[RMDB]
RNA sequence: GGGAACGACUCGAGUAGAGUCGAAAAGUGCAGAGUGAAAUUCAUAGGUGCACCGCCAAUGUGGCGCAAAGACCCGGUACUCCGCGCAGUCGCGCUGUAAACGUUCUGUGUUGGCGUUCAGGCCUCACCUGGUACCUAGGUUCGCCUAGGUACCAGGAAAAGAAACAACAACAACAAC
Reactivity to DMS in 0.01 (KOAc 150mM, MgCl2 10mM, bicine 150mM(pH8.5), 24C), signal-to-noise 2, nucleotides 027 to 126: g010u000g000c080a010g040a200g020u030g010a100a070a100u010u020c080a080u000a020g020g070u000g030c020a030c030c000g000c000c000a060a110u010g000u040g010g010c030g010c110a010a080a160g000a090c020c020c040g000g030u030a050c090u000c110c140g020c100g020c060a050g000u000c100g000c020g000c030u050g000u020a090a070a170c030g050u050u000c030u020g040u010g040u000u010g010g050c110g000u000u020c070a050g000g000c030c010u000c020a230
Reactivity to 2A3 in 0.01 (KOAc 150mM, MgCl2 10mM, bicine 150mM(pH8.5), 24C), signal-to-noise 2, nucleotides 027 to 126: g110u110g010c010a000g110a000g230u150g180a150a130a110u100u170c100a000u030a080g000g000u060g010c060a050c040c000g000c000c000a100a180u300g060u180g080g000c000g080c060a000a040a000g090a030c000c000c000g000g000u050a050c080u000c010c000g000c000g070c060a060g040u010c040g000c030g010c110u050g120u160a040a040a000c000g010u040u020c020u030g130u000g000u010u150g030g000c010g020u060u040c060a000g060g120c020c000u010c000a040
An RNA of 177 nucleotides, treated with DMS and 2A3 and read out base by base. DMS adducts were read by reverse transcription with MarathonRT. For 2A3, 533 sequencing reads were counted. The reactions ran in a buffer of 150 mM KOAc, 10 mM MgCl2 and 150 mM bicine (pH 8.5), at 24 C. Source: RMDB library OK1LIB, as collected in RNAgym.